[RMDB]
RNA sequence: GGGAACGACUCGAGUAGAGUCGAAAACGCUCGGCAUGGUUCCGCCGUUAUCGGGCCUUUGCAAUAGUUGCCAACGACAACUUUGCUCCGGUGGCUGUCGCCGCGUAAGCGGUGCCAAAAACCGACCUCCCUGUGACGUGUUCGCACGUCACAGGGAAAAAGAAACAACAACAACAAC
Reactivity to 2A3 in 0.01 (KOAc 150mM, MgCl2 10mM, bicine 150mM(pH8.5), 24C), signal-to-noise 2, nucleotides 027 to 126: c110g010c030u040c010g000g000c020a160u300g020g050u030u010c010c000g000c030c000g140u090u070a060u020c030g040g000g000c000c000u050u040u060g000c000a000a000u070a090g000u000u000g000c000c090a100a040c150g120a080c010a020a000c000u000u000u000g020c000u030c030c000g000g000u000g020g020c040u010g010u070c010g050c020c000g040c000g030u080a140a000g000c000g000g000u000g010c000c000a050a050a000a020a020c030c020g060a080c040c060